Structure probing data (2A3 and DMS) for a 177-nucleotide construct. For 2A3 the reverse transcriptase was SuperScript II with manganese. 2A3 is a SHAPE reagent: it acylates the 2'-hydroxyl of flexible nucleotides of all four kinds. For DMS, 36,611 sequencing reads were counted. Values cover nucleotides 27 to 126. DMS adducts were read by reverse transcription with MarathonRT. The reactions ran in a buffer of 150 mM KOAc, 10 mM MgCl2 and 150 mM bicine (pH 8.5), at 24 C.

RNA sequence: GGGAACGACUCGAGUAGAGUCGAAAAGUCGCCGCGUCUACAUCAACGCCCAGCGCGGGCGAGGGAGGCGUCCUACGGGGGUGACCCAUUCGCCGGCAUGGAAGAGGACGGCAAGAUUGCCGCGACGCAUGAGGAUAGUAUUCGUACUAUCCUCAUGAAAAGAAACAACAACAACAAC
Reactivity to 2A3 in 0.01 (KOAc 150mM, MgCl2 10mM, bicine 150mM(pH8.5), 24C), signal-to-noise 9, nucleotides 027 to 126: g020u010c000g000c020c010g000c010g000u000c020u050a090c020a120u070c030a090a060c030g030c010c010c000a060g060c230g020c090g170g010g000c000g000a020g050g040g020a250g010g040c020g030u020c000c010u050a160c160g200g010g000g030g030u080g150a290c010c010c000a040u040u030c010g010c010c010g070g000c030a040u050g040g020a080a050g040a050g080g030a020c010g010g020c020a020a020g080a070u160u300g000c010c010g000c020g010a010c010g000
Reactivity to DMS in 0.01 (KOAc 150mM, MgCl2 10mM, bicine 150mM(pH8.5), 24C), signal-to-noise 9, nucleotides 027 to 126: g010u000c020g030c010c220g020c010g010u000c010u000a100c100a120u000c040a070a090c080g000c260c000c010a090g010c150g020c070g000g020g010c010g010a030g000g000g010a110g010g010c030g010u000c010c010u010a110c190g020g010g010g000g010u000g000a150c020c010c010a180u000u000c030g010c020c010g000g010c030a080u000g000g010a090a200g000a100g000g000a050c030g000g010c080a080a060g000a070u000u000g050c010c130g010c010g000a040c060g010